[RMDB]
RNA sequence: GGGAACGACUCGAGUAGAGUCGAAAACGAGGUCGUACAAUAUGCUGUGCUCUACAUAAACCCUCCCCACAGCGUGUACGACCAUGAGGUUGCCUGAGAAAUUUGGGGAGGGUUCAGGCAUACUCAAGGUAGACGUAGUAUUCGUACUGCGUCUACCAAAAGAAACAACAACAACAAC
Reactivity to DMS in 0.01 (KOAc 150mM, MgCl2 10mM, bicine 150mM(pH8.5), 24C), signal-to-noise 7, nucleotides 027 to 126: c060g000a090g010g000u000c000g010u000a010c000a060a140u030a040u040g010c000u000g010u000g000c140u020c170u040a120c230a130u020a060a200a080c010c000c010u000c000c000c000c000a020c010a010g000c000g020u010g010u000a010c010g000a010c000c010a010u010g000a060g000g000u000u000g010c000c000u000g000a050g010a070a100a250u010u000u000g010g000g000g000a030g000g000g010u000u000c000a010g000g020c010a070u020a130c010u000c020a100a190
Reactivity to 2A3 in 0.01 (KOAc 150mM, MgCl2 10mM, bicine 150mM(pH8.5), 24C), signal-to-noise 9, nucleotides 027 to 126: c050g030a070g010g000u010c010g010u010a010c060a090a160u160a130u300g000c000u000g010u020g050c060u050c070u200a170c070a090u290a060a070a050c000c000c000u010c000c000c010c000a010c000a000g020c100g050u050g000u010a000c000g000a000c000c000a010u050g010a010g060g080u090u060g000c000c000u030g000a040g090a070a210a080u080u080u060g010g000g000g000a000g000g000g000u000u000c000a000g000g000c000a000u090a040c020u040c030a040a070